The record gives the reactivity of an RNA of 177 nucleotides to DMS and 2A3.

RNA sequence: GGGAACGACUCGAGUAGAGUCGAAAAAUAAAGUAGUCUCCUGCAGCGUCUGAGGUUUCCGUUGCAGUCCUCGGAACCAGGACCUCGGCGUGGCCUAGCGAGUUAUGGGGACGAAGGCCGUGAAAAACACUUAGACGUAGUUCGCUACGUCUAAGUGAAAAGAAACAACAACAACAAC
Reactivity to DMS in 0.01 (KOAc 150mM, MgCl2 10mM, bicine 150mM(pH8.5), 24C), signal-to-noise 3, nucleotides 027 to 126: a050u000a070a060a120g010u010a120g010u000c000u000c000c010u000g020c070a140g010c030g020u000c020u020g010a030g000g000u000u000u000c080c080g000u000u000g000c080a110g020u000c050c040u010c110g010g020a090a060c100c100a160g000g000a020c010c010u000c020g010g010c020g000u010g000g020c020c060u010a060g000c050g010a090g020u010u000a070u000g000g020g000g000a030c020g010a090a130g010g020c030c020g020u000g010a060a100a070a090a130
Reactivity to 2A3 in 0.01 (KOAc 150mM, MgCl2 10mM, bicine 150mM(pH8.5), 24C), signal-to-noise 2, nucleotides 027 to 126: a000u190a000a080a010g040u030a000g020u050c010u000c030c000u030g090c030a070g040c030g020u110c050u230g050a030g040g030u010u090u060c050c030g030u040u100g060c110a040g100u100c000c000u030c020g030g060a060a060c060c030a070g080g030a020c000c010u000c010g030g000c010g010u030g010g000c000c020u050a050g040c010g040a020g050u070u110a100u150g000g020g000g000a000c000g010a040a000g060g000c010c030g000u100g080a100a090a050a000a000
Conditions: 150 mM KOAc, 10 mM MgCl2 and 150 mM bicine (pH 8.5), 24 C. The 2A3 profile rests on 2,360 reads. The data come from the RNA Mapping Database (RMDB), library M2PK90.